[RMDB]
The record gives the reactivity of an RNA of 177 nucleotides to 2A3 and DMS. For DMS the reverse transcriptase was MarathonRT. The reactions ran in a buffer of 150 mM KOAc, 10 mM MgCl2 and 150 mM bicine (pH 8.5), at 24 C. For 2A3 the reverse transcriptase was SuperScript II with manganese.
RNA sequence: GGGAACGACUCGAGUAGAGUCGAAAAGGGCUCGGUCAACCCGCCCCCGCAAGGUUUCGGGUUCGAUGAGCGGGGUGUGCUCACGCCGAGCCUACAGGGCCGGUGCAUCCGCCCGCGGGAUCAAUGAGUCUCUGUUACAAUUCGUUGUAACAGAGACAAAAGAAACAACAACAACAAC
Reactivity to 2A3 in 0.01 (KOAc 150mM, MgCl2 10mM, bicine 150mM(pH8.5), 24C), signal-to-noise 5, nucleotides 027 to 126: g000g000g000c000u000c000g020g040u090c040a050a090c000c000c000g000c000c000c000c000c000g050c030a060a070g140g030u050u130u120c050g020g040g050u150u250c060g050a090u050g040a030g030c030g010g000g010g020u180g050u040g020c020u030c020a030c030g020c000c010g000a000g000c000c000u000a010c040a020g030g020g050c220c070g060g020u140g100c040a110u050c000c010g010c000c040c000g000c040g010g050g010a050u100c040a090a150u170g030a040
Reactivity to DMS in 0.01 (KOAc 150mM, MgCl2 10mM, bicine 150mM(pH8.5), 24C), signal-to-noise 4, nucleotides 027 to 126: g000g000g000c000u000c000g000g020u010c160a100a200c130c150c030g000c090c070c020c000c030g000c060a100a100g000g010u010u000u000c030g000g000g010u030u040c060g010a040u040g000a210g000c000g030g000g010g010u040g000u000g000c020u010c110a110c300g030c000c000g010a020g010c000c000u010a020c090a110g000g010g010c080c060g030g000u010g000c220a160u030c040c040g000c010c000c000g000c110g000g000g000a150u020c090a090a130u040g000a300